The record gives the reactivity of an RNA of 177 nucleotides to 2A3 and DMS. The RNA was probed in 150 mM KOAc, 10 mM MgCl2 and 150 mM bicine (pH 8.5) at 24 C. DMS adducts were read by reverse transcription with MarathonRT. Values cover nucleotides 27 to 126. The data come from the RNA Mapping Database (RMDB), library RFM100.
RNA sequence: GGGAACGACUCGAGUAGAGUCGAAAAUGACACGAGCCCCCGUGGCCAAAAGCCCAGUGUUUACAGCACCUCUCACAUCCAGGGAAACCCCACCCUGGCGCUCACUCUUAGUAACACUUCCUAGUAGUCGGAUAAGCGAUUUCGAUCGCUUAUCCGAAAAAGAAACAACAACAACAAC
Reactivity to 2A3 in 0.01 (KOAc 150mM, MgCl2 10mM, bicine 150mM(pH8.5), 24C), signal-to-noise 2, nucleotides 027 to 126: u080g040a020c000a010c030g060a060g040c030c000c000c000c030g030u080g020g010c050c020a080a030a010a010g030c010c020c010a010g010u040g070u080u090u100a070c070a030g030c020a010c010c000u030c010u010c010a060c040a070u000c000c000a010g010g000g010a080a090a080c000c000c000c000a010c000c000c000u000g000g000c010g030c000u020c000a060c000u010c010u020u080a040g030u030a060a010c020a000c050u010u050c010c000u020a100g050u070a030g020
Reactivity to DMS in 0.01 (KOAc 150mM, MgCl2 10mM, bicine 150mM(pH8.5), 24C), signal-to-noise 1, nucleotides 027 to 126: u100g020a160c100a050c010g000a140g110c060c000c020c080c050g020u000g040g050c130c080a000a020a090a270g000c000c000c050a000g100u000g050u000u030u020a070c110a050g110c010a060c000c000u030c010u000c030a050c020a130u020c040c000a070g000g000g000a060a080a170c030c040c000c060a180c080c010c000u000g000g000c200g000c030u000c000a000c010u000c000u000u020a020g020u040a040a170c000a020c080u000u000c000c000u010a020g000u000a000g000